Chemical mapping of a 177-nucleotide RNA with DMS and 2A3.
[RMDB]
RNA sequence: GGGAACGACUCGAGUAGAGUCGAAAAUCGCCGAUAUCACGGCCAUUGCCGAGCUGGGCACAGACAGAUCGGCAAAAGUAUUGGUGGACAAUACCUUUGCCUCACCCGCGUUGCAGCAGCCGUUGCGACCUUGAAGCUCAUUCGUGAGCUUCAAGGUAAAAGAAACAACAACAACAAC
Reactivity to DMS in 0.01 (KOAc 150mM, MgCl2 10mM, bicine 150mM(pH8.5), 24C), signal-to-noise 3, nucleotides 027 to 126: u000c120g010c000c030g000a130u010a090u000c170a090c030g000g000c010c080a090u000u000g010c040c060g000a080g010c040u020g050g020g000c070a060c110a050g010a100c130a070g000a050u010c150g010g010c000a010a010a040a030g030u000a010u000u000g000g000u010g000g010a210c040a030a040u000a040c030c040u000u010u000g010c000c000u000c080a060c060c010c030g000c110g010u010u010g010c030a040g000c080a070g020c030c070g000u010u000g030c100g010
Reactivity to 2A3 in 0.01 (KOAc 150mM, MgCl2 10mM, bicine 150mM(pH8.5), 24C), signal-to-noise 1, nucleotides 027 to 126: u000c000g000c080c020g020a070u090a030u230c070a020c030g010g010c010c010a070u040u060g020c000c040g020a030g020c020u090g000g010g070c140a040c000a100g150a050c000a010g020a100u030c000g000g000c000a000a000a020a000g010u050a010u020u030g070g000u170g170g230a000c020a010a000u030a030c000c000u060u030u050g000c020c000u020c030a010c020c030c020g020c030g100u090u150g040c020a030g000c020a030g000c040c000g020u010u160g040c070g010
The 2A3 profile rests on 1,760 reads.